[RMDB]
RNA sequence: GGGAACGACUCGAGUAGAGUCGAAAAGAUGGUUCUUCCCAAGGAGGACAGCCGUAAACCAUAGAAAGCAACCACUUGACUCUGGGUGUCCCUGGUUUGCAAGUGCCUCUUGUGUCCGCCAUCUGCAUUUCUGUCUAGAUGGUAAGGUUGAGGGAGGGAGUUCUCCCAAUUUCGAUUGGGAGAACUCAAAAGAAACAACAACAACAAC
Reactivity to 2A3 in 0.01 (KOAc 150mM, MgCl2 10mM, bicine 150mM(pH8.5), 24C), signal-to-noise 1, nucleotides 027 to 156: g110a030u150g040g030u060u020c020u000u050c020c000c000a000a000g110g030a040g000g020a120c000a060g060c020c040g090u110a050a040a020c000c000a040u090a200g140a080a220a000g030c050a040a100c010c040a060c010u090u080g010a060c000u040c030u090g000g030g000u050g120u110c000c000c050u000g030g000u010u010u020g020c020a090a020g080u020g150c010c010u000c000u030u060g050u050g030u030c000c040g000c020c000a000u030c000u000g000c020a080u080u270u210c140u010g090u020c020u110a010g010a000u000g000g000u060a220a010g000g020u050u040g130a130g010g000g000a000g000g000

About this RNA
This 207-nucleotide RNA was probed chemically with 2A3. Source: RMDB library OK3TST, as collected in RNAgym. Conditions: 150 mM KOAc, 10 mM MgCl2 and 150 mM bicine (pH 8.5), 24 C.